Chemical mapping of a 177-nucleotide RNA with DMS and 2A3. The RNA was probed in 150 mM KOAc, 10 mM MgCl2 and 150 mM bicine (pH 8.5) at 24 C. DMS adducts were read by reverse transcription with MarathonRT. 2A3 adducts were read by reverse transcription with SuperScript II with manganese. Source: RMDB library OK1LIB, as collected in RNAgym.
RNA sequence: GGGAACGACUCGAGUAGAGUCGAAAAUAAAAUCUGGUCGUUUUAUACAAGGAUGCUUGAAUGUCAAUAAACAUUGUGCACAAGAUGAAGCAUUUGUUCAGAAGUCUGGGGAGAAUAUGUCAAGCAGGUACACAGGUCUAUUCGUAGACCUGUGUACAAAAGAAACAACAACAACAAC
Reactivity to DMS in 0.01 (KOAc 150mM, MgCl2 10mM, bicine 150mM(pH8.5), 24C), signal-to-noise 3, nucleotides 027 to 126: u050a060a060a060a100u000c050u010g000g000u000c030g030u000u000u010u020a060u000a100c130a070a120g010g050a050u010g000c010u000u030g020a050a050u010g010u030c060a090a070u020a150a090a050c120a070u010u010g010u020g000c080a070c080a040a050g000a120u020g030a110a060g010c100a010u010u010u010g010u020u020c070a080g000a110a040g010u010c010u000g020g000g010g000a090g030a060a050u020a020u000g000u040c040a000a100g000c100a010g000
Reactivity to 2A3 in 0.01 (KOAc 150mM, MgCl2 10mM, bicine 150mM(pH8.5), 24C), signal-to-noise 4, nucleotides 027 to 126: u110a010a030a000a040u040c030u060g070g000u040c010g020u020u000u080u090a200u040a060c090a120a060g090g060a110u020g010c020u030u060g020a040a040u040g050u060c080a030a150u080a130a140a000c070a070u060u100g050u060g020c050a030c040a030a070g090a200u170g050a050a000g000c020a010u020u010u050g050u000u040c030a040g010a100a020g050u010c090u060g010g000g030g000a020g040a090a050u120a100u220g090u040c020a010a010g000c020a030g060